[RMDB]
RNA sequence: GGGAACGACUCGAGUAGAGUCGAAAAGGCAGUUCACCUCUCCUUAGGCAACCUGGUGUGGUCUCUUGCUCUCAGAAGGUCACUAUACUGAUGCCAAACUUAGUGUGGACACCCAAUUGGCAUAGCGCCGAAAGUCAUACUUCGGUAUGACUUUCGGAAAAGAAACAACAACAACAAC
Reactivity to DMS in 0.01 (KOAc 150mM, MgCl2 10mM, bicine 150mM(pH8.5), 24C), signal-to-noise 2, nucleotides 027 to 126: g000g000c140a120g000u010u020c030a030c010c020u000c090u010c020c100u000u000a170g010g000c030a050a050c120c110u000g000g000u010g010u010g010g000u000c020u020c010u000u000g000c070u010c140u020c080a120g000a010a060g000g010u000c040a020c020u000a140u020a050c050u020g000a170u000g020c000c030a030a060a140c130u020u000a030g000u030g010u000g030g000a030c040a170c020c020c060a130a110u020u020g000g020c000a030u000a080g000c230g000
Reactivity to 2A3 in 0.01 (KOAc 150mM, MgCl2 10mM, bicine 150mM(pH8.5), 24C), signal-to-noise 1, nucleotides 027 to 126: g050g000c020a040g020u000u090c010a020c060c000u040c000u020c000c000u060u070a040g000g000c030a030a130c040c080u020g000g000u020g010u010g030g020u000c000u060c000u060u120g060c000u060c040u020c070a080g040a160a000g050g020u020c010a000c040u080a020u090a110c040u040g030a070u070g030c000c000a020a030a020c060u100u060a090g010u010g010u030g190g020a020c010a070c060c000c020a040a210u070u060g050g000c100a080u080a150g130c040g000

About this RNA:
The record gives the reactivity of an RNA of 177 nucleotides to DMS and 2A3. Source: RMDB library OK2TST, as collected in RNAgym. The reactions ran in a buffer of 150 mM KOAc, 10 mM MgCl2 and 150 mM bicine (pH 8.5), at 24 C.